[RMDB]
RNA sequence: GGGAACGACUCGAGUAGAGUCGAAAAGAUCCAAGGUUCGCCUUGGAUCCAAGGCGGCGAGUCUCGCUCAGCGGCGCGCGACACCGCGCAGCGCAGCUGGAACAAUUUCGCCAUUCGUGGCGAAAAAAAUCUGUGUUACGUUCGCGUAACACAGAUUAAAAGAAACAACAACAACAAC
Reactivity to DMS in 0.01 (KOAc 150mM, MgCl2 10mM, bicine 150mM(pH8.5), 24C), signal-to-noise 3, nucleotides 027 to 126: g000a010u000c000c000a020a020g010g010u000u020c250g030c000c010u010u000g010g000a010u000c030c060a040a120g000g030c020g000g000c040g010a120g000u020c060u010c040g020c040u010c030a030g010c010g010g000c020g030c000g010c030g000a180c210a170c200c130g030c010g010c020a030g020c010g000c010a060g000c000u010g010g010a060a070c180a070a160u000u000u000c000g010c010c000a040u000u000c120g010u000g010g000c000g000a000a000a000a040a050
Reactivity to 2A3 in 0.01 (KOAc 150mM, MgCl2 10mM, bicine 150mM(pH8.5), 24C), signal-to-noise 2, nucleotides 027 to 126: g000a000u010c010c000a000a000g020g010u060u100c200g110c060c010u010u010g000g000a000u000c010c000a030a040g040g000c020g000g000c020g010a020g050u000c040u040c100g060c010u050c020a010g000c000g020g000c010g000c010g000c000g100a060c040a050c110c070g040c000g000c050a020g020c090g000c020a040g000c000u010g000g040a060a020c040a070a090u030u010u000c000g000c000c000a000u030u080c240g070u020g000g000c000g100a000a000a000a000a000